[RMDB]
RNA sequence: GGGAACGACUCGAGUAGAGUCGAAAAAGUGGACGAUACAUUACACCGAGCAAUUAAAUUACAGUCCACGCUCGGCCAUUAUUCUGGCGAGAGCCAGUUCACAGACAGCUAGCGAAAGGAAGGACCUAGCAGGAAGGAAGGAGCUAGCGCUAGGCCAGCUGGCAGGGAUGUUCGCAUCCCUGCCAGCAAAAGAAACAACAACAACAAC
Reactivity to 2A3 in 0.01 (KOAc 150mM, MgCl2 10mM, bicine 150mM(pH8.5), 24C), signal-to-noise 1, nucleotides 027 to 156: a000g040u030g030g010a020c050g030a040u090a210c040a130u110u250a030c070a030c020c010g000a010g130c020a010a200u090u100a260a050a030u220u170a090c080a010g010u020c000c000a000c000g000c000u000c000g030g000c070c030a090u220u170a060u300u090c000u000g000g000c000g030a030g000a000g020c000c000a000g050u170u090c030a000c010a030g110a040c000a000g030c030u020a060g030c000g170a100a100a000g040g100a010a090g000g010a000c000c000u020a000g020c120a060g040g030a020a030g000g000a030a100g000g070a020g000c000u000a000g120c000g000c030u010a010g030g040c030c030a020

This 207-nucleotide RNA was probed chemically with 2A3. The RNA was probed in 150 mM KOAc, 10 mM MgCl2 and 150 mM bicine (pH 8.5) at 24 C. Values cover nucleotides 27 to 156. The data come from the RNA Mapping Database (RMDB), library OK3TST. Reactivities are rounded to 0.1 and cut off at 0 and 3. For 2A3 the reverse transcriptase was SuperScript II with manganese.